[RMDB]
RNA sequence: GGGAACGACUCGAGUAGAGUCGAAAAUCCUAACGCUUCGGCGUUAGGAAAAGUUAAUUGGCAGAUUAACAUGUUAGAAUUAGAAUCUAACAAGUCUAAAAAAAACUGCGUGGUUCGCCACGCAGAACUGUAUAAUAAUCUUCGGAUUAUUAUACAGAAAAGAAACAACAACAACAAC
Reactivity to DMS in 0.01 (KOAc 150mM, MgCl2 10mM, bicine 150mM(pH8.5), 24C), signal-to-noise 3, nucleotides 027 to 126: u000c000c000u000a000a010c000g020c000u000u020c170g030g020c000g000u000u000a010g000g000a000a010a050a110g000u000u000a010a010u000u010g020g030c170a140g020a090u000u000a020a010c000a150u000g000u000u000a000g010a040a120u010u010a140g000a150a110u000c010u000a010a000c020a040a190g000u020c090u010a010a010a010a120a030a060a140a100c010u010g020c000g020u000g000g010u000u010c190g020c010c010a000c020g000c010a000g010a020a060
Reactivity to 2A3 in 0.01 (KOAc 150mM, MgCl2 10mM, bicine 150mM(pH8.5), 24C), signal-to-noise 3, nucleotides 027 to 126: u000c000c000u000a010a000c000g000c000u030u050c160g160g000c000g000u010u010a010g000g000a020a020a010a010g000u020u040a010a020u060u030g200g030c070a030g050a160u040u000a020a040c030a060u060g000u000u020a010g010a020a030u140u080a110g070a210a090u030c000u000a000a010c000a010a030g070u010c050u220a030a010a050a040a030a040a070a110c000u000g000c010g000u000g000g020u060u070c160g050c100c000a000c000g000c010a000g000a000a000